RNA sequence: GGGAACGACUCGAGUAGAGUCGAAAACACAGCAGUUAGGCCCAUCAGUGAAGUACCUCUGUGUGGGCAAAGAGGUUGGAGAAGGAGGUACCCCACACUUGCAAGGAUAUUUGGAGCUCAAGAGAAAGUACUAAUCGCGAUUCGUCGCGAUUAGUACAAAAGAAACAACAACAACAAC
Reactivity to 2A3 in 0.01 (KOAc 150mM, MgCl2 10mM, bicine 150mM(pH8.5), 24C), signal-to-noise 1, nucleotides 027 to 126: c060a010c010a040g110c040a000g020u030u080a050g010g070c000c000c000a020u030c010a000g030u000g140a170a020g150u110a110c000c040u000c020u040g040u030g020u000g060g000g000c000a000a010a000g260a020g010g020u060u040g020g030a110g070a050a030g080g100a000g030g040u080a070c020c000c020c010a070c000a000c030u040u090g050c020a020a040g100g000a010u050a070u110u070u180g070g000a000g000c020u000c060a030a000g050a010g020a080a090a000
Reactivity to DMS in 0.01 (KOAc 150mM, MgCl2 10mM, bicine 150mM(pH8.5), 24C), signal-to-noise 2, nucleotides 027 to 126: c080a050c050a070g010c060a010g010u000u000a100g020g050c000c000c000a020u000c040a060g020u000g010a100a130g020u010a080c150c030u010c010u000g000u000g060u000g000g000g030c060a000a080a050g000a070g020g010u000u000g010g000a080g020a130a060g000g000a050g020g000u010a090c020c010c000c020a060c030a090c080u010u010g010c050a090a070g000g000a110u010a120u000u000u020g020g000a080g000c040u000c050a070a060g000a100g000a090a080a090